[RMDB]
RNA sequence: GGGAACGACUCGAGUAGAGUCGAAAAGAAGGUUGAGUCACAGCAGGUGAGCAGCCACCACCAGGCCCGCAGGGAGUCCUACACCUGGAUUUGGCUGCUGCAGUGUUGUUGAGGAUUAGCCGGGCAUGGUGGCGGGCACCACCUGUCUGCUGGGAGACGCUGGUAUAUACUUCGGUAUAUACCAGCGAAAAGAAACAACAACAACAAC
Reactivity to 2A3 in 0.01 (KOAc 150mM, MgCl2 10mM, bicine 150mM(pH8.5), 24C), signal-to-noise 2, nucleotides 027 to 156: g130a030a040g090g010u060u090g010a010g080u090c030a010c000a000g010c000a000g000g020u000g070a170g060c020a010g000c000c000a000c000c000a000c000c000a010g010g000c000c000c000g020c010a050g050g110g040a120g030u030c000c020u040a020c030a020c030c060u060g030g090a180u040u070u190g050g010c060u060g000c030u040g000c030a010g030u000g040u240u060g030u080u060g100a020g020g000a030u080u020a040g140c100c040g000g000g040c000a010u000g000g000u000g000g000c000g010g000g000c010a010c000c010a000c000c010u010g010u000c000u000g000c070u010g030g040g040a110g010a010
The record gives the reactivity of an RNA of 207 nucleotides to 2A3. Conditions: 150 mM KOAc, 10 mM MgCl2 and 150 mM bicine (pH 8.5), 24 C. It was measured as part of the RMDB library OK3TST.